RNA sequence: GGGAACGACUCGAGUAGAGUCGAAAAGCACUAGAGGGCGUAACGGCUGGGUGUAACCCAACUCUAGGUGUGCUGAUUAGCGGGCUUGACUCCGUAACGAAUAGGCACUGGUGGUAAAAAGCAUCCCUGACCAUAUACAUCUUCGGAUGUAUAUGAAGGUCUUACAAAAGUUCGCUUUUGUAAGACCAAAAGAAACAACAACAACAAC
Reactivity to DMS in 0.01 (KOAc 150mM, MgCl2 10mM, bicine 150mM(pH8.5), 24C), signal-to-noise 2, nucleotides 027 to 156: g040c030a040c040u010a050g000a090g020g000g000c060g040u000a230a200c270g020g010c020u010g000g000g060u000g020u020a130a300c010c040c000a040a010c000u000c020u000a050g000g000u010g040u000g000c030u000g000a140u010u000a050g050c000g030g000g010c020u000u000g000a060c090u000c010c010g050u000a090a080c100g010a030a050u000a180g020g040c010a010c020u010g000g060u000g020g030u010a010a010a110a050a060g000c030a090u000c020c000c020u000g000a160c190c000a000u000a000u000a000c000a010u000c010u010u010c300g080g000a010u020g030u010a000u000a000u030g010a090a130
Reactivity to 2A3 in 0.01 (KOAc 150mM, MgCl2 10mM, bicine 150mM(pH8.5), 24C), signal-to-noise 3, nucleotides 027 to 156: g000c010a010c010u020a000g030a020g030g030g010c020g040u070a060a060c090g150g000c010u010g010g010g010u050g060u050a040a040c000c000c000a000a020c000u010c000u010a030g060g040u060g000u020g010c020u000g010a090u000u130a010g040c000g000g030g020c060u170u180g060a070c030u020c050c020g000u020a050a030c080g020a050a080u090a160g030g000c030a000c050u040g090g000u060g010g050u100a070a080a040a000a040g020c020a040u030c010c000c000u010g020a010c010c020a000u000a000u000a000c000a000u000c010u030u030c120g070g000a000u010g000u000a000u000a000u000g000a020a010